[RMDB]
RNA sequence: GGGAACGACUCGAGUAGAGUCGAAAACGCCAGCUGAAUCGAAGCUAGUAUCGAGUGCGAGUUCGUACUUGAUGCGUUUGCAAAGCGCAACUCAUAGUUGCGAAAGCUGGCACUUGUGAAUGUGUACGAUCAUCGGUUAUUUCGAUAAUUGAUGAUCAAAAGAAACAACAACAACAAC
Reactivity to DMS in 0.01 (KOAc 150mM, MgCl2 10mM, bicine 150mM(pH8.5), 24C), signal-to-noise 9, nucleotides 027 to 126: c160g000c000c000a010g010c000u000g000a120a080u030c070g020a130a230g010c010u010a080g000u000a010u000c000g000a010g020u010g000c000g000a300g020u050u030c020g000u010a000c000u000u000g000a000u000g010c010g000u020u020u000g010c010a040a130a130g000c020g000c000a010a010c000u000c240a130u060a100g010u000u000g000c000g000a030a090a030g010c000u000g000g000c010a030c060u000u010g000u010g000a090a130u020g010u000g000u010a100c150
Reactivity to 2A3 in 0.01 (KOAc 150mM, MgCl2 10mM, bicine 150mM(pH8.5), 24C), signal-to-noise 9, nucleotides 027 to 126: c050g000c000c000a000g000c000u030g090a040a060u100c030g030a050a010g000c000u000a010g000u010a000u010c000g000a000g000u000g000c000g000a090g230u100u260c000g000u010a000c000u000u000g000a000u000g000c010g040u030u080u070g000c010a030a030a020g040c000g000c000a000a000c000u040c060a200u120a150g000u000u000g000c000g020a110a010a000g000c000u000g000g010c000a010c020u040u080g040u020g090a160a060u110g030u010g010u060a020c060
Structure probing data (DMS and 2A3) for a 177-nucleotide construct. For 2A3 the reverse transcriptase was SuperScript II with manganese. The reactions ran in a buffer of 150 mM KOAc, 10 mM MgCl2 and 150 mM bicine (pH 8.5), at 24 C.